RNA sequence: GGGAACGACUCGAGUAGAGUCGAAAAUCAACUGGAUAUCAGCUUGCCAGGUAUCGAGCGCAGUGUGGCCGAAGAUUUAGUGAAAAAAGCCCAUGUUGUCUGCCCAUACUCCAACGCCACGCGUGGCUAAUCUCUGAACUUUCGAGUUCAGAGAUUAAAAAGAAACAACAACAACAAC
Reactivity to DMS in 0.01 (KOAc 150mM, MgCl2 10mM, bicine 150mM(pH8.5), 24C), signal-to-noise 6, nucleotides 027 to 126: u010c060a100a140c050u000g010g010a060u000a060u000c050a080g020c060u000u000g010c040c020a100g020g000u000a050u000c050g010a070g020c080g010c060a090g010u010g020u000g020g010c020c030g000a110a080g000a080u010u000u010a080g000u000g000a010a040a070a090a110a140g010c040c010c030a090u020g010u000u000g010u000c030u000g010c020c020c010a100u010a070c080u000c030c030a050a110c200g010c010c020a020c070g000c130g030u000g000g010c060
Reactivity to 2A3 in 0.01 (KOAc 150mM, MgCl2 10mM, bicine 150mM(pH8.5), 24C), signal-to-noise 2, nucleotides 027 to 126: u070c000a030a060c010u050g040g010a040u050a060u180c040a020g110c050u060u080g050c030c010a030g040g000u060a060u090c080g040a060g030c020g000c080a050g010u020g000u050g130g000c020c030g060a050a010g040a050u090u170u200a100g040u100g180a000a010a040a050a050a030g020c030c000c020a040u120g050u080u060g000u040c020u020g030c040c020c000a010u040a050c030u000c040c020a070a050c050g000c000c010a010c030g080c010g030u020g010g020c020